[RMDB]
RNA sequence: GGGAACGACUCGAGUAGAGUCGAAAAUGGUCAGAAUAAACUGCCGACGCACCCGCUCACAGCGGCGAAUAAAUUCAUCAUCGUGAUGAUCGCGAUAACGUUGGGCAUAGAUAUACCAAACGAGACAUCAUACUGGAUAGUUCGCUAUCCAGUAUGAAAAAGAAACAACAACAACAAC
Reactivity to 2A3 in 0.01 (KOAc 150mM, MgCl2 10mM, bicine 150mM(pH8.5), 24C), signal-to-noise 5, nucleotides 027 to 126: u100g020g030u130c030a020g080a150a070u140a090a150a040c020u030g000c000c000g000a010c030g000c030a070c010c030c020g020c000u040c010a120c010a030g030c040g030g000c050g030a010a010u160a100a070a030u100u020c020a030u020c010a020u100c060g170u080g040a050u060g040a040u090c030g010c020g070a030u050a160a040c040g010u030u010g120g000g000c020a020u070a060g080a030u110a010u030a140c030c030a080a060a010c060g020a040g020a070c010a050
Reactivity to DMS in 0.01 (KOAc 150mM, MgCl2 10mM, bicine 150mM(pH8.5), 24C), signal-to-noise 7, nucleotides 027 to 126: u010g010g020u010c050a070g020a090a100u010a030a050a090c090u010g000c030c010g010a090c060g010c080a240c140c040c020g010c050u010c190a090c300a140g010c030g000g010c050g010a060a090u010a040a060a060u010u000c050a030u000c040a110u010c140g020u010g000a060u000g000a070u000c050g000c040g000a060u010a070a100c040g000u000u000g010g010g000c050a050u000a100g010a120u010a080u000a070c020c020a020a040a030c070g010a190g000a110c230a070